[RMDB]
RNA sequence: GGGAACGACUCGAGUAGAGUCGAAAAGCCUCGUAAAAAGCGGCACAAAAGUAAUUGCCAACAAUUACGACUACGCUCUGGCUGCUUAAUUGACGGCCACGUCGAACCGGUUCACGCCUGAUAGACCGGUGAGACGUAACUUCAUCAGGCUGGCAUCGAUUAUAUGUUGCUUCGGCAACAUAUAAUCAAAAGAAACAACAACAACAAC
Reactivity to DMS in 0.01 (KOAc 150mM, MgCl2 10mM, bicine 150mM(pH8.5), 24C), signal-to-noise 2, nucleotides 027 to 156: g020c030c010u010c090g020u010a070a040a050a080a040g020c010g000g020c100a230c170a050a080a100a300g010u000a010a040u000u000g030c070c200a150a140c020a070a100u000u000a020c040g010a200c000u000a090c020g000c020u000c050u000g020g000c000u000g020c030u000u000a090a140u010u000g000a030c010g030g000c000c000a050c030g020u010c010g020a210a050c010c000g020g000u000u000c040a130c030g000c050c010u010g050a100u000a300g000a030c000c010g000g000u000g000a300g010a040c000g000u010a010a020c070u000u000c030a050u000c000a030g000g000c000u000g000g020c040a120u010c080
Reactivity to 2A3 in 0.01 (KOAc 150mM, MgCl2 10mM, bicine 150mM(pH8.5), 24C), signal-to-noise 7, nucleotides 027 to 156: g050c010c010u050c060g050u090a030a050a030a050a030g040c050g010g000c090a040c080a140a140a020a010g030u040a020a060u060u030g050c070c040a060a100c020a090a120u020u020a000c010g060a050c080u140a060c060g040c040u070c060u050g000g000c000u000g000c010u070u060a130a130u300u090g050a130c020g000g000c000c000a000c000g000u000c010g000a000a000c010c000g000g000u050u040c010a010c030g000c000c000u000g000a020u010a010g010a000c000c000g020g000u000g000a000g000a000c000g000u000a020a020c040u170u150c010a020u000c010a010g000g000c020u060g120g000c040a100u060c140
The data come from the RNA Mapping Database (RMDB), library ARCHII. Chemical mapping of a 207-nucleotide RNA with DMS and 2A3. Reactivities are given for positions 27 through 156. The RNA was probed in 150 mM KOAc, 10 mM MgCl2 and 150 mM bicine (pH 8.5) at 24 C. For DMS the reverse transcriptase was MarathonRT. In probing experiments dimethyl sulfate is read out at A N1 and C N3, which are open when not base-paired.